[RMDB]
RNA sequence: GGGAACGACUCGAGUAGAGUCGAAAAAGGAAAGAAGGACUCGGACGCGAACCCGUAAGGUGAAACUUUCACAUUUAUUGGGGAGUACACUCGAGGAGUGGAAGGCGGGGAGACGGGGAUCCCGGGCAAACCAAACAGUUCGCUGUUUGGAAAAGAAACAACAACAACAAC
Reactivity to DMS in 0.01 (KOAc 150mM, MgCl2 10mM, bicine 150mM(pH8.5), 24C), signal-to-noise 8, nucleotides 027 to 129: a070g010g010a030a010a010g030a060a020g020g010a070c010u020c130g000g030a110c100g030c020g000a130a160c000c020c030g030u010a060a040g030g050u010g040a020a080a110c170u050u040u030c000a050c040a080u050u020u040a010u030u050g000g000g000g000a110g040u040a100c090a050c040u030c030g000a110g000g020a050g000u010g030g030a040a070g000g060c100g000g000g000g000a040g030a060c120g000g000g000g000a090u000c020c000c000g000g000g000c140a030a080a130
Reactivity to 2A3 in 0.01 (KOAc 150mM, MgCl2 10mM, bicine 150mM(pH8.5), 24C), signal-to-noise 9, nucleotides 027 to 129: a000g050g000a020a020a020g030a010a020g020g010a020c010u010c040g030g010a010c040g020c020g050a070a060c000c000c010g020u030a030a040g030g010u020g040a080a080a090c050u080u140u040c050a060c030a220u080u100u120a110u140u270g010g000g010g010a020g010u040a030c040a020c040u050c020g100a060g020g020a020g020u070g010g030a030a010g030g000c030g000g000g000g010a020g010a010c030g000g000g010g010a010u020c000c010c000g010g010g000c040a050a030a020
This 170-nucleotide RNA was probed chemically with DMS and 2A3. 2A3 adducts were read by reverse transcription with SuperScript II with manganese. For DMS, 49,228 sequencing reads were counted. As a SHAPE reagent, 2A3 marks flexible, mostly unpaired nucleotides at the ribose 2'-OH. Conditions: 150 mM KOAc, 10 mM MgCl2 and 150 mM bicine (pH 8.5), 24 C.